[RMDB]
RNA sequence: GGGAACGACUCGAGUAGAGUCGAAAAGACGCGAAGAUGCUCGGCUUGUUCGGCACCUCGCUCGCCGCGCUGCUGGCCUUCAUCUUCUGGGAGCGGCGGCAUGAGAGCCCCAUCGUGCCACUGACGCAUAAAGACGUUAGUUCGCUAACGUCUUUAUAAAAGAAACAACAACAACAAC
Reactivity to DMS in 0.01 (KOAc 150mM, MgCl2 10mM, bicine 150mM(pH8.5), 24C), signal-to-noise 9, nucleotides 027 to 126: g000a110c150g000c080g010a040a050g020a060u000g000c070u000c060g020g010c100u000u000g010u000u000c040g000g010c020a060c070c050u000c060g010c050u000c080g010c030c020g010c170g000c040u000g000c050u000g010g010c120c060u010u000c080a050u010c080u000u000c040u010g010g000g000a120g010c030g010g010c030g000g010c010a020u000g000a060g000a150g010c030c010c010c070a150u000c070g020u000g000c010c010a090c090u000g000a100c130g020c140
Reactivity to 2A3 in 0.01 (KOAc 150mM, MgCl2 10mM, bicine 150mM(pH8.5), 24C), signal-to-noise 5, nucleotides 027 to 126: g050a010c060g020c030g080a020a030g060a060u060g010c070u070c070g020g000c030u110u110g050u100u070c010g010g000c010a040c010c030u070c020g020c020u030c080g010c020c000g000c010g000c020u170g010c020u050g050g050c010c010u090u090c030a100u030c030u190u010c040u060g060g030g020a100g030c030g100g000c010g000g000c020a030u070g030a040g000a020g070c000c010c000c010a040u070c030g000u020g000c010c000a040c050u080g050a050c040g040c070